[RMDB]
RNA sequence: GGGAACGACUCGAGUAGAGUCGAAAAGCUAGUGCCCAAGCACUGCUUGAGCGCGACGCCGCCAAACUGCGGGGAAACCACUCUUUGCACCGAGGCUACCAAGCACGGCGGCCGCCAUCCCACCCAAUCUCGAUGUGGGAUAGCGGGCCGAGUGUGGCUAUGUCGUUUUGUUCGCAAAACGACAUAGAAAAGAAACAACAACAACAAC
Reactivity to DMS in 0.01 (KOAc 150mM, MgCl2 10mM, bicine 150mM(pH8.5), 24C), signal-to-noise 2, nucleotides 027 to 156: g000c040u000a100g050u010g010c000c000c000a050a060g010c000a200c130u010g020c010u010u010g010a050g010c010g020c020g030a110c160g010c020c030g030c030c000a060a110a110c080u000g010c030g040g000g030g030a070a080a150c070c070a090c080u000c050u000u010u000g000c040a130c030c010g010a130g000g000c000u000a130c030c050a060a200g030c040a060c020g000g010c000g010g000c000c000g030c020c010a020u000c000c000c010a000c000c050c030a090a240u010c140u020c090g000a220u010g060u000g000g010g030a010u000a020g000c000g020g020g030c000c000g000a030g030u000g010u000g000g000
Reactivity to 2A3 in 0.01 (KOAc 150mM, MgCl2 10mM, bicine 150mM(pH8.5), 24C), signal-to-noise 5, nucleotides 027 to 156: g030c040u050a010g010u010g010c010c020c040a010a010g070c130a190c300u300g000c010u020u020g010a020g010c000g000c000g030a020c110g030c030c020g020c010c030a080a080a040c070u070g010c040g000g010g000g030a010a080a050c050c020a060c040u040c020u040u050u100g040c040a020c030c010g050a080g070g000c010u050a090c030c050a070a010g010c010a000c020g190g020c010g010g000c110c000g000c000c000a010u000c000c000c000a000c030c060c020a150a290u110c050u070c190g200a170u180g010u000g000g000g010a000u000a000g020c050g040g020g000c000c000g000a010g000u020g010u030g020g000